Source: RMDB library OK1LIB, as collected in RNAgym. Chemical mapping of a 177-nucleotide RNA with 2A3 and DMS. The RNA was probed in 150 mM KOAc, 10 mM MgCl2 and 150 mM bicine (pH 8.5) at 24 C. 2A3 adducts were read by reverse transcription with SuperScript II with manganese. For DMS the reverse transcriptase was MarathonRT.
RNA sequence: GGGAACGACUCGAGUAGAGUCGAAAACAUGUGCGCUUGAACUGCGGCGCUCGGGCAGAGUCGAGAGCCCUUCUGGUUCGUUGCUUGACCGAAGAGGUAGUCAUCGAGCUGCGGUGCCGCGGCACCGUCUUGGGUGCGGGUUCGCUCGUACUCAAGAAAAAGAAACAACAACAACAAC
Reactivity to 2A3 in 0.01 (KOAc 150mM, MgCl2 10mM, bicine 150mM(pH8.5), 24C), signal-to-noise 9, nucleotides 027 to 126: c040a050u100g020u020g020c060g010c080u080u110g060a060a020c010u060g000c000g000g000c010g000c010u030c040g040g130g000c010a010g010a020g170u020c000g010a000g000a010g020c000c000c000u000u000c040u090g010g000u050u050c020g070u110u210g090c080u090u160g020a000c000c010g000a010a010g090a130g030g000u060a110g150u050c060a240u020c090g000a010g040c000u010g010c010g010g010u010g000c000c010g010c000g000g000c000a010c010c030g040
Reactivity to DMS in 0.01 (KOAc 150mM, MgCl2 10mM, bicine 150mM(pH8.5), 24C), signal-to-noise 8, nucleotides 027 to 126: c070a090u020g010u010g010c040g010c110u010u010g010a090a120c060u010g010c010g000g010c010g010c010u010c270g010g010g010c010a030g000a060g010u010c010g010a040g010a110g000c000c010c020u000u000c010u040g030g000u010u000c120g010u020u030g000c190u030u020g010a020c000c010g000a020a020g000a160g010g010u000a080g010u010c040a090u000c000g000a020g010c010u000g010c000g000g010u000g010c000c020g010c060g010g010c050a030c060c150g000